About this RNA:
Structure probing data (DMS and 2A3) for a 177-nucleotide construct. For 2A3 the reverse transcriptase was SuperScript II with manganese. For 2A3, 11,099 sequencing reads were counted. It was measured as part of the RMDB library OK1LIB.
RNA sequence: GGGAACGACUCGAGUAGAGUCGAAAAGCAACAGAGCGAGGGACGGAGACCGUGCACUGCAAUAGCCGACGUGGCAAGUCAGACUGUCCCACGUACUAUGUCGGCUGCGAAGCGCCUAUGGCCACCAAGUGCCUAAUUAGUUCGCUAAUUAGGCACUAAAAGAAACAACAACAACAAC
Reactivity to DMS in 0.01 (KOAc 150mM, MgCl2 10mM, bicine 150mM(pH8.5), 24C), signal-to-noise 5, nucleotides 027 to 126: g020c070a100a070c090a070g000a120g000c020g010a070g020g000g000a060c050g000g010a130g020a090c040c050g010u010g000c040a080c040u010g000c080a080a090u040a030g020c020c040g010a050c030g020u000g000g010c150a140a090g010u010c110a080g020a150c050u020g000u000c020c000c020a080c120g030u020a110c040u030a020u010g000u000c030g010g000c000u010g000c070g000a080a060g000c090g010c020c020u030a050u020g000g000c020c020a110c050c060a090
Reactivity to 2A3 in 0.01 (KOAc 150mM, MgCl2 10mM, bicine 150mM(pH8.5), 24C), signal-to-noise 8, nucleotides 027 to 126: g060c020a020a060c040a060g070a000g060c030g020a080g020g010g030a020c020g030g020a050g020a050c020c040g060u070g020c020a020c100u100g010c050a070a180u110a100g010c020c010g010a070c060g020u050g030g020c050a040a020g030u040c040a020g040a190c040u050g060u080c000c000c010a010c020g010u050a050c020u070a030u120g030u030c020g020g000c020u030g010c040g030a080a020g030c020g010c040c010u120a120u120g030g000c010c000a020c010c010a050
The reactions ran in a buffer of 150 mM KOAc, 10 mM MgCl2 and 150 mM bicine (pH 8.5), at 24 C.